[RMDB]
RNA sequence: GGGAACGACUCGAGUAGAGUCGAAAAGGGGUCCUUGAUACAUGAGGCAAGCGAGGUGUGGCUGAAGCCUCCACGGCCACACUACCCACCGCUUGCUACCCACCAUGCGGUCAAGGACGGAGGCACCCAAAGUUACCUACGUUCGCGUAGGUAACAAGACAUGUACCCUGUUCGCAGGGUACAUGUCAAAAGAAACAACAACAACAAC
Reactivity to DMS in 0.01 (KOAc 150mM, MgCl2 10mM, bicine 150mM(pH8.5), 24C), signal-to-noise 1, nucleotides 027 to 156: g020g050g060g090u000c010c000u000u000g040a050u000a050c000a120u010g000a230g060g020c000a010a040g030c020g030a300g000g010u010g010u000g000g000c000u000g000a000a170g010c070c020u000c000c000a300c000g010g010c000c010a030c000a010c000u000a030c060c030c090a300c010c000g000c000u000u000g000c000u000a000c000c070c000a300c160c010a010u010g000c000g100g060u010c040a130a040g000g000a050c000g020g000a040g000g040c000a000c040c000c000a030a020a140g000u000u000a010c000c000u000a000c000g010u000u000c300g010c040g130u010a000g060g000u000a000a000c000a140a060
Reactivity to 2A3 in 0.01 (KOAc 150mM, MgCl2 10mM, bicine 150mM(pH8.5), 24C), signal-to-noise 2, nucleotides 027 to 156: g030g000g050g030u000c010c000u000u020g000a010u010a050c010a010u000g000a000g020g000c000a000a000g010c000g010a010g030g000u000g000u000g010g000c010u030g020a080a010g020c010c000u010c000c000a020c010g000g010c020c010a000c000a000c000u030a040c020c050c030a040c000c010g000c000u000u000g000c000u010a010c020c000c010a030c000c010a000u040g020c240g150g010u000c000a000a010g000g000a000c000g000g000a000g000g010c010a040c000c000c000a040a140a000g000u000u000a000c000c000u000a010c010g000u010u060c300g000c000g140u000a000g000g000u000a000a000c000a010a010